[RMDB]
About this RNA
Structure probing data (DMS and 2A3) for a 207-nucleotide construct. Source: RMDB library OK3TST, as collected in RNAgym. The RNA was probed in 150 mM KOAc, 10 mM MgCl2 and 150 mM bicine (pH 8.5) at 24 C. DMS adducts were read by reverse transcription with MarathonRT.

RNA sequence: GGGAACGACUCGAGUAGAGUCGAAAAGAUGGAGGGUCCGGCCUCGGACUCCUCCUAUAAGAUGUAACUAUUACGAGGCCAUUAAUGGCGUUUUCGCCUAGGUGCACGCCGGCGUGCGUGACACCGUAAGACUUAAUGAAUAACACGCCGGAUACAAAAAUACUAUACCAUUCGUGGUAUAGUAUUUAAAAGAAACAACAACAACAAC
Reactivity to DMS in 0.01 (KOAc 150mM, MgCl2 10mM, bicine 150mM(pH8.5), 24C), signal-to-noise 2, nucleotides 027 to 156: g000a120u000g000g000a040g010g020g030u000c020c010g020g010c020c040u010c010g040g020a020c020u000c010c020u000c010c000u000a020u000a080a170g030a160u000g010u000a140a150c110u000a150u010u000a140c020g010a050g030g020c000c010a250u000u000a080a090u010g030g020c020g000u000u000u000u000c020g030c000c000u000a180g000g020u000g010c010a030c030g020c000c020g000g000c010g040u000g030c000g000u010g010a180c020a040c030c020g020u010a030a130g000a120c100u010u000a100a100u000g010a130a120u000a090a050c020a020c000g020c010c000g010g000a150u000a040c070a010a120
Reactivity to 2A3 in 0.01 (KOAc 150mM, MgCl2 10mM, bicine 150mM(pH8.5), 24C), signal-to-noise 3, nucleotides 027 to 156: g070a010u090g000g000a010g010g000g010u010c010c020g000g000c000c000u000c010g000g010a010c020u030c020c020u000c000c000u010a030u030a000a030g040a010u130g030u140a080a090c060u020a090u150u130a030c030g010a000g000g000c010c000a020u070u150a080a080u160g000g000c040g070u090u060u220u300c020g000c010c000u000a080g020g000u000g000c000a000c010g010c020c000g000g000c000g000u020g000c000g030u010g050a130c000a000c000c000g000u020a050a060g010a010c010u040u080a030a020u140g110a080a060u080a140a030c000a000c010g020c000c010g010g040a110u150a130c060a010a210